[RMDB]
RNA sequence: GGGAACGACUCGAGUAGAGUCGAAAAGCCACGCGGAGUACGAUCGAGGGUACAGCACAAUCUCAACAUUUGUUUAAUUUAACAACUCAAACACUGAAGAAAGUCAAAGGACUGUACUACUUUGUAGCGAAAUCAAUGGUUUCGACCAUUGAUUUCGAAAAGAAACAACAACAACAAC
Reactivity to 2A3 in 0.01 (KOAc 150mM, MgCl2 10mM, bicine 150mM(pH8.5), 24C), signal-to-noise 7, nucleotides 027 to 126: g020c010c000a030c030g030c040g020g070a020g030u080a050c030g020a090u090c060g030a100g020g020g020u070a010c000a030g020c020a010c020a080a130u010c040u050c060a070a150c040a130u050u030u050g050u030u040u080a130a160u060u110u190a080a050c050a020a050c020u060c060a060a090a080c050a030c070u040g020a040a010g030a100a140a020g050u060c040a120a080a040g100g020a010c020u030g020u070a020c010u040a040c010u070u080u140g040u080a020g060
Reactivity to DMS in 0.01 (KOAc 150mM, MgCl2 10mM, bicine 150mM(pH8.5), 24C), signal-to-noise 3, nucleotides 027 to 126: g000c010c020a120c090g020c070g010g010a050g010u000a030c060g020a050u010c110g000a080g020g000g030u000a070c040a050g040c060a040c050a070a110u000c020u000c050a030a160c100a100u020u000u010g020u000u020u030a030a090u040u020u010a080a080c110a050a060c220u020c100a090a030a040c040a020c120u010g000a100a060g000a010a050a040g020u010c010a050a070a200g010g000a050c020u000g000u010a120c020u000a060c040u000u000u000g020u000a140g010